[RMDB]
Conditions: 150 mM KOAc, 10 mM MgCl2 and 150 mM bicine (pH 8.5), 24 C. The record gives the reactivity of an RNA of 177 nucleotides to 2A3 and DMS. The 2A3 profile rests on 10,050 reads. For DMS the reverse transcriptase was MarathonRT. For 2A3 the reverse transcriptase was SuperScript II with manganese. Values cover nucleotides 27 to 126.
RNA sequence: GGGAACGACUCGAGUAGAGUCGAAAAGAUAUGGAUGCUACAAGGGAGCUCUGUGUCGGAAACGACACUAGAGCGACGAUCUUGAGCAUCCUAAGUCAAAAGGUUAGUCCCUUCGGGGACUAACCAACUCCUAAGUUAUCUUCGGAUAACUUAGGAGAAAAGAAACAACAACAACAAC
Reactivity to 2A3 in 0.01 (KOAc 150mM, MgCl2 10mM, bicine 150mM(pH8.5), 24C), signal-to-noise 2, nucleotides 027 to 126: g020a010u030a010u050g010g000a000u010g000c000u080a280c040a020a000g020g030g020a060g030c000u000c010u000g000u010g000u000c000g020g000a020a010a000c010g010a000c020a000c130u210a010g010a000g000c010g020a020c010g010a010u010c010u010u010g020a000g000c000a000u000c000c000u010a000a000g020u000c030a030a080a070a190g000g000u000u000a000g010u010c000c000c000u010u070c280g040g010g000g000a000c000u010a000a000c000c000a000a010
Reactivity to DMS in 0.01 (KOAc 150mM, MgCl2 10mM, bicine 150mM(pH8.5), 24C), signal-to-noise 3, nucleotides 027 to 126: g000a020u000a060u010g000g010a000u000g010c000u000a130c020a010a020g000g010g010a050g020c010u000c000u000g010u000g010u010c000g000g000a020a010a040c000g000a010c000a010c020u010a010g010a020g030c000g030a050c300g000a040u000c000u000u000g000a030g010c000a010u000c000c010u000a010a050g010u010c020a140a090a110a140g000g000u010u000a000g000u010c000c010c000u000u020c250g040g020g020g000a010c000u000a010a000c000c010a020a040